[RMDB]
RNA sequence: GGGAACGACUCGAGUAGAGUCGAAAAGAUAUGGAUCCGUGAACUACCUGAUUGGUUCGGAAACGAACCAAAUAGGCACGGAGUCCUAAGUCAAAGUCGUUAAUAGAGUUCGCUCUAUUAACGACAAGGCUAGUUAAUACUUCGGUAUUAACUAGCCAAAAGAAACAACAACAACAAC
Reactivity to DMS in 0.01 (KOAc 150mM, MgCl2 10mM, bicine 150mM(pH8.5), 24C), signal-to-noise 3, nucleotides 027 to 126: g010a030u000a300u010g030g000a250u000c000c010g000u000g000a030a020c050u000a300c010c010u000g000a100u000u010g000g010u010u000c020g010g000a110a040a160c000g000a010a000c000c000a010a000a070u000a010g000g000c010a000c010g000g000a040g000u000c000c000u000a040a140g000u010c050a110a140a100g000u000c000g010u000u000a010a000u000a000g000a000g020u000u010c300g060c000u000c000u000a010u000u000a000a010c000g000a000c010a010a040
Reactivity to 2A3 in 0.01 (KOAc 150mM, MgCl2 10mM, bicine 150mM(pH8.5), 24C), signal-to-noise 3, nucleotides 027 to 126: g030a010u090a030u150g000g030a000u010c000c000g020u010g000a070a110c100u120a080c300c000u040g020a140u040u020g000g000u000u000c020g010g020a100a060a030c010g000a010a000c000c000a010a010a000u040a000g000g000c000a010c000g010g010a020g020u020c000c000u030a080a030g030u050c040a010a130a060g000u000c000g000u020u000a000a000u000a020g020a000g030u080u130c240g080c130u000c000u020a000u010u000a000a000c000g000a000c000a000a010

The data come from the RNA Mapping Database (RMDB), library TTRDEL. An RNA of 177 nucleotides, treated with DMS and 2A3 and read out base by base. The 2A3 profile rests on 6,632 reads. For DMS the reverse transcriptase was MarathonRT. The DMS profile rests on 3,138 reads. The reactions ran in a buffer of 150 mM KOAc, 10 mM MgCl2 and 150 mM bicine (pH 8.5), at 24 C.